Overview: This 207-nucleotide RNA was probed chemically with 2A3 and DMS. Source: RMDB library M2RFPK, as collected in RNAgym. For DMS, 2,331 sequencing reads were counted. Values cover nucleotides 27 to 156.
RNA sequence: GGGAACGACUCGAGUAGAGUCGAAAAUUGGUGCGCGGAGAGGGUAACCACCGGCGCGCGUCACUGAUAUAUCCACCGGGGGGUAAGGGGAGAAAAGGAUACAGCGCGACGAAGUUAGCACGCUGCCGAAAUGUACCCACAUUCGUGUGGGUACAAAGGUGGAUACAUUAUUCGUAAUGUAUCCACCAAAAGAAACAACAACAACAAC
Reactivity to 2A3 in 0.01 (KOAc 150mM, MgCl2 10mM, bicine 150mM(pH8.5), 24C), signal-to-noise 2, nucleotides 027 to 156: u060u050g020g000u020g000c030g000c040g040g100a180g040a050g120g040g010u080a090a020c050c050a030c030c010g080g040c060g000c010g000c000g130u110c020a010c020u040g070a020u020a010u020a010u140c050c020a060c040c060g000g000g000g000g000g000u040a050a010g060g010g000g020a010g040a030a070a020a000g020g000a020u050a100c040a010g010c030g010c000g070a080c030g010a070a010g060u070u040a040g030c000a030c040g020c000u040g030c030c020g030a050a030a000u070g000u010a000c000c000c000a000c000a000u000u020c140g040u030g000u020g010g000g000u000a000c000a000a000a000
Reactivity to DMS in 0.01 (KOAc 150mM, MgCl2 10mM, bicine 150mM(pH8.5), 24C), signal-to-noise 1, nucleotides 027 to 156: u020u010g010g000u010g040c060g040c020g000g000a130g000a140g030g030g000u000a150a180c120c020a090c050c020g020g030c030g010c000g040c070g000u010c090a100c100u000g010a090u000a170u010a130u020c020c050a140c030c050g060g000g000g000g010g050u000a070a090g000g010g000g010a100g020a060a070a110a010g030g010a110u000a040c040a090g000c000g020c020g010a160c060g030a100a080g040u000u000a110g010c050a060c000g000c000u010g020c020c020g020a120a050a160u010g000u020a020c010c000c000a020c010a150u000u010c190g000u020g040u000g000g010g010u000a000c000a000a020a090

The reactions ran in a buffer of 150 mM KOAc, 10 mM MgCl2 and 150 mM bicine (pH 8.5), at 24 C.